[RMDB]
Background: An RNA of 177 nucleotides, treated with 2A3 and DMS and read out base by base. The 2A3 profile rests on 1,188 reads. The reactions ran in a buffer of 150 mM KOAc, 10 mM MgCl2 and 150 mM bicine (pH 8.5), at 24 C. High DMS reactivity at an A or C suggests that its Watson-Crick edge is free.
RNA sequence: GGGAACGACUCGAGUAGAGUCGAAAACGUACGUCGGAGAUUCAAGUAAUGAUACGGUGGCACCUAAAUUCAUUAAGAACCAAACGCUAAAAUCUGCUUACGGACAUACUGUUCAAUUUUUCAAAAACUAGUCACGUAGUUUCGACUACGUGACUAGAAAAGAAACAACAACAACAAC
Reactivity to 2A3 in 0.01 (KOAc 150mM, MgCl2 10mM, bicine 150mM(pH8.5), 24C), signal-to-noise 2, nucleotides 027 to 126: c020g010u040a000c030g020u010c000g040g000a050g020a050u040u080c020a080a050g040u030a120a140u060g020a030u020a060c030g010g000u030g090g060c100a120c020c010u060a070a080a090u080u040c050a030u100u210a150a060g040a040a030c050c010a070a000a030c030g010c000u090a060a070a030a060u070c020u030g080c030u130u080a020c040g080g030a020c010a030u130a040c050u140g050u050u060c030a080a150u000u070u000u000u210c050a040a020a020a050a060
Reactivity to DMS in 0.01 (KOAc 150mM, MgCl2 10mM, bicine 150mM(pH8.5), 24C), signal-to-noise 2, nucleotides 027 to 126: c110g040u000a050c050g020u020c040g030g000a050g000a140u000u030c120a020a150g040u000a020a050u000g000a080u000a060c150g030g010u000g000g010c130a160c040c010u010a030a050a100u010u000c040a070u010u000a070a080g030a070a080c030c020a090a060a100c100g000c040u000a030a060a030a050u020c050u010g030c020u000u000a100c070g000g000a060c020a050u000a020c050u020g020u020u000c050a050a090u000u010u010u000u030c070a010a090a150a050a110